Conditions: 150 mM KOAc, 10 mM MgCl2 and 150 mM bicine (pH 8.5), 24 C.
An RNA of 177 nucleotides, treated with 2A3 and DMS and read out base by base.
Reactivities are given for positions 27 through 126.
It was measured as part of the RMDB library OK1LIB.
For DMS, 1,075 sequencing reads were counted.
For DMS the reverse transcriptase was MarathonRT.
[RMDB]
RNA sequence: GGGAACGACUCGAGUAGAGUCGAAAACAAACAAAACACCUCCAAAGUCAAAAGGCGAAAGAAAAGCGAGGAAAACUUCGGAAGAGUGUAUGCCAAAAAGACGGAGGAAACACUCUUGACAAACAAACCACGUCGUAUAUUUCGAUAUACGACGUGGAAAAGAAACAACAACAACAAC
Reactivity to 2A3 in 0.01 (KOAc 150mM, MgCl2 10mM, bicine 150mM(pH8.5), 24C), signal-to-noise 2, nucleotides 027 to 126: c000a000a130a030c040a010a110a010a000c040a080c000c000u020c000c000a100a150a000g060u090c030a010a030a070a050g010g000c050g070a150a040a040g120a030a180a030a000g060c030g030a010g010g030a090a080a100a060c010u100u020c070g070g040a030a050g010a010g000u020g010u030a040u180g000c000c020a030a280a030a000a090g090a010c080g020g010a030g000g070a010a010a000c000a000c000u000c000u010u050g030a030c100a050a110a000c020a010a020a020
Reactivity to DMS in 0.01 (KOAc 150mM, MgCl2 10mM, bicine 150mM(pH8.5), 24C), signal-to-noise 1, nucleotides 027 to 126: c080a170a090a130c070a040a210a140a150c290a010c020c000u000c000c020a110a000a080g030u000c100a030a080a300a140g000g030c050g060a000a150a060g010a120a040a280a270g000c010g000a000g000g000a030a000a280a110c060u000u030c020g000g050a050a000g040a030g020u000g000u000a040u000g000c050c010a000a040a080a200a100g010a100c000g000g000a100g000g000a060a000a000c010a020c000u000c000u000u000g000a000c250a220a130a070c160a070a070a030